Source: RMDB library OK2TST, as collected in RNAgym. Structure probing data (DMS and 2A3) for a 177-nucleotide construct. For DMS the reverse transcriptase was MarathonRT. Values cover nucleotides 27 to 126. 2A3 adducts were read by reverse transcription with SuperScript II with manganese. The RNA was probed in 150 mM KOAc, 10 mM MgCl2 and 150 mM bicine (pH 8.5) at 24 C.

RNA sequence: GGGAACGACUCGAGUAGAGUCGAAAACAGAUCAGAGGAUAGUUCUAUUUUUCCUUUGAGUAUUCAGAACAGAAUUCGCGGGAGAGGUUUCUUAAGAGGUCUGUUGGAUGGAUUGAUUAGAGCUAGAUAAUGAGUAAUCAUUCGUGAUUACUCAUUAAAAAGAAACAACAACAACAAC
Reactivity to DMS in 0.01 (KOAc 150mM, MgCl2 10mM, bicine 150mM(pH8.5), 24C), signal-to-noise 6, nucleotides 027 to 126: c090a120g020a100u000c030a080g010a060g020g000a080u010a040g010u010u020c130u000a070u010u010u000u000u000c010c010u000u010u010g010a060g010u010a050u010u010c060a090g010a090a060c090a070g000a060a110u010u000c070g020c230g000g000g010a050g010a110g010g010u010u010u000c020u000u010a060a170g000a070g010g010u000c020u000g000u000u000g000g010a100u000g010g010a080u000u010g010a100u000u000a060g000a070g000c040u000a050g000a210
Reactivity to 2A3 in 0.01 (KOAc 150mM, MgCl2 10mM, bicine 150mM(pH8.5), 24C), signal-to-noise 2, nucleotides 027 to 126: c020a000g120a070u060c000a010g050a030g070g040a040u010a070g110u140u000c060u110a220u180u050u020u020u020c000c000u070u060u040g020a030g010u040a160u080u180c060a030g070a140a030c000a040g060a060a070u070u130c100g020c050g030g080g000a040g000a040g000g170u040u280u090c010u020u050a060a070g020a010g030g000u020c030u040g040u060u050g040g010a050u050g000g060a050u030u120g020a030u000u160a020g020a000g060c020u040a000g030a080